[RMDB]
RNA sequence: GGGAACGACUCGAGUAGAGUCGAAAAAGAGAAGGCUGAGAUCUGGAAGCUCAGACCAGAAGCCCCAGUGUCCAUAAAUGCUGGGGUCACACGCCUUGCAGAGAUAAACAGAGCGUGACCAGCGUGCCACGUCACAAAUAUUCGUAUUUGUGACGUGAAAAGAAACAACAACAACAAC
Reactivity to DMS in 0.01 (KOAc 150mM, MgCl2 10mM, bicine 150mM(pH8.5), 24C), signal-to-noise 6, nucleotides 027 to 126: a070g000a170g000a170a100g010g010c010u010g020a110g000a090u000c040u010g020g010a160a150g010c060u010c070a070g010a120c000c000a040g000a140a180g000c010c000c000c020a020g010u000g010u000c090c130a130u000a110a080a020u000g000c000u000g000g000g000g010u000c070a060c040a050c080g010c000c010u000u000g010c070a100g000a120g010a120u010a090a090a060c050a070g010a060g010c010g020u000g010a190c040c030a100g010c060g010u010g010c130
Reactivity to 2A3 in 0.01 (KOAc 150mM, MgCl2 10mM, bicine 150mM(pH8.5), 24C), signal-to-noise 4, nucleotides 027 to 126: a000g090a010g010a080a010g040g000c010u030g010a030g020a200u040c060u160g080g060a110a040g030c020u010c070a050g030a200c000c000a010g010a050a010g020c000c000c000c000a000g000u010g030u040c080c040a150u120a200a160a000u100g010c000u000g000g010g000g000u010c000a010c000a000c010g000c020c000u020u030g010c020a030g060a010g030a270u170a120a130a000c020a020g020a010g020c000g010u010g010a050c010c010a010g030c020g060u060g040c040